An RNA of 177 nucleotides, treated with 2A3 and DMS and read out base by base.
RNA sequence: GGGAACGACUCGAGUAGAGUCGAAAAUAUCAGGCCUUAGAACAGGAUUAUCAGAUCAAAGUUUAUUUUUGCCAUCCAUAUUCACCAUGGGAGCGAGGUUCCAAUGAAUAUUUCAAUAGACGGUUACCUACCUAUUAGUCUUCGGACUAAUAGGUAGAAAAGAAACAACAACAACAAC
Reactivity to 2A3 in 0.01 (KOAc 150mM, MgCl2 10mM, bicine 150mM(pH8.5), 24C), signal-to-noise 4, nucleotides 027 to 126: u210a050u060c050a010g020g050c000c020u050u090a080g050a080a030c020a040g060g040a040u060u080a100u260c070a040g070a090u050c050a050a100a070g010u040u140u080a140u050u170u030u070u070g020c010c000a020u000c000c000a000u010a070u100u100c040a050c080c040a060u060g040g020g010a050g070c060g010a040g030g050u050u000c010c020a020a020u060g010a050a020u080a050u080u160u040c040a040a030u030a090g100a050c030g010g020u080u050a030c000
Reactivity to DMS in 0.01 (KOAc 150mM, MgCl2 10mM, bicine 150mM(pH8.5), 24C), signal-to-noise 6, nucleotides 027 to 126: u010a080u000c080a090g000g010c010c040u000u010a080g010a080a080c070a090g010g000a060u000u010a080u000c110a060g010a060u000c070a070a090a100g010u000u010u000a070u010u000u000u000u000g010c060c030a070u000c020c050a030u010a060u000u000c060a070c130c080a090u010g010g010g010a080g020c080g010a040g000g010u000u000c020c020a050a090u010g000a060a060u010a050u000u000u000c070a050a070u010a070g000a080c080g020g010u010u010a080c160
The data come from the RNA Mapping Database (RMDB), library OK2TRN. The reactions ran in a buffer of 150 mM KOAc, 10 mM MgCl2 and 150 mM bicine (pH 8.5), at 24 C. For DMS, 7,645 sequencing reads were counted. For DMS the reverse transcriptase was MarathonRT.